RNA sequence: GGGAACGACUCGAGUAGAGUCGAAAAGGUUAAUAAUAACUAGAACUUCUAAAUUAGCUGAUGGGAGCUACCGGACGCUUCUUGCAUGGUACUUUAUGUAUUUCAUGGUAGAUCUCUCUGUUCACAGGCUAACUACUAUUUUCGAAUAGUAGUUAGCAAAAGAAACAACAACAACAAC
Reactivity to 2A3 in 0.01 (KOAc 150mM, MgCl2 10mM, bicine 150mM(pH8.5), 24C), signal-to-noise 9, nucleotides 027 to 126: g030g000u040u020a050a040u110a100a050u090a080a090c080u060a070g070a130a070c040u120u050c040u120a140a210a190u130u080a040g030c040u060g030a080u120g040g000g000a010g000c000u010a010c000c010g110g040a070c050g030c000u100u070c050u080u250g000c010a020u040g010g030u030a020c010u090u280u170a120u300g020u020a030u020u100u120c050a040u080g000g010u010a040g010a140u030c000u000c000u000c010u040g060u050u060c070a060c020a050g080
Reactivity to DMS in 0.01 (KOAc 150mM, MgCl2 10mM, bicine 150mM(pH8.5), 24C), signal-to-noise 9, nucleotides 027 to 126: g010g000u000u000a020a060u010a120a090u010a060a080c090u010a070g000a100a170c160u010u000c040u010a040a090a100u010u010a040g010c040u000g000a070u010g000g000g000a010g010c010u000a010c010c000g020g020a130c280g000c020u010u030c180u010u010g020c010a080u010g000g000u000a010c010u000u010u020a070u050g010u000a000u000u010u020c040a060u010g010g000u000a010g000a070u020c010u000c010u000c010u010g010u000u010c050a080c110a130g010
Structure probing data (2A3 and DMS) for a 177-nucleotide construct. Source: RMDB libraries RFM100 and RFMREP, as collected in RNAgym.